[RMDB]
RNA sequence: GGGAACGACUCGAGUAGAGUCGAAAACAACGCGUCCAUAAUGUACGGACAAUCGAAACCGGUACCAAGUUUAUUGGAGACUCUGAGAAAAUUGAAGAGCUGGAAACUGAAACAAGUAACAGCUGUAACUACUUGAACGAUUCGUCGUUCAAGUAGUAAAAGAAACAACAACAACAAC
Reactivity to 2A3 in 0.01 (KOAc 150mM, MgCl2 10mM, bicine 150mM(pH8.5), 24C), signal-to-noise 3, nucleotides 027 to 126: c040a020a020c070g020c050g130u000c000c000a030u120a300a130u250g130u150a060c040g000g050a050c000a020a070u090c030g040a190a050a000c000c040g050g030u060a040c000c040a030a000g080u140u240u120a240u090u090g030g000a090g060a050c020u030c040u050g040a050g090a180a140a090a060u180u140g050a150a100g020a030g120c010u010g000g040a300a270a010c000u010g020a110a230a050c090a280a040g000u010a000a030c010a010g000c010u050g040u100a020
Reactivity to DMS in 0.01 (KOAc 150mM, MgCl2 10mM, bicine 150mM(pH8.5), 24C), signal-to-noise 3, nucleotides 027 to 126: c080a120a150c220g040c120g050u010c020c040a050u030a120a100u000g020u000a070c110g000g000a050c010a140a100u010c110g000a070a070a070c090c060g000g020u020a050c050c050a030a070g020u010u000u020a090u040u000g000g000a290g000a050c020u000c060u000g000a130g000a070a060a120a150u030u030g010a150a070g000a100g030c000u000g020g000a030a100a040c020u000g010a170a150a120c160a020a080g000u000a000a300c010a050g000c020u000g000u000a080